The data come from the RNA Mapping Database (RMDB), library OK3TST. The record gives the reactivity of an RNA of 207 nucleotides to 2A3. The reactions ran in a buffer of 150 mM KOAc, 10 mM MgCl2 and 150 mM bicine (pH 8.5), at 24 C.
RNA sequence: GGGAACGACUCGAGUAGAGUCGAAAAUCCUUCAUUCAUUCAUUCAGUACACAUGGGUACAACAUCCCUGCCCUGGAGUUGCCCAGAGUCUAGGGAGGGGAAAGAUCUAUUACCCUGGGCCUCGGCCAGCUGGGGAGUGCUGCUGGUGGAGAGGGGCACAAUGCUAACGAUUCGUCGUUAGCAUUGUAAAAGAAACAACAACAACAAC
Reactivity to 2A3 in 0.01 (KOAc 150mM, MgCl2 10mM, bicine 150mM(pH8.5), 24C), signal-to-noise 2, nucleotides 027 to 156: u070c020c020u040u030c100a190u080u050c060a050u070u040c020a050u110u120c020a040g090u130a010c060a020c010a180u180g040g010g060u030a020c040a160a060c030a190u060c000c020c020u110g140c010c000c000u000g010g020a010g070u060u070g030c000c040c000a000g000a010g170u000c000u000a020g020g010g000a030g000g000g000g000a040a080a030g050a000u060c040u130a120u130u250a150c020c020c000u020g000g010g030c000c000u020c020g010g000c030c020a020g000c040u060g020g090g030g010a070g000u070g010c030u000g010c000u000g030g050u090g000g010a060g000a050g060g030g010g000c040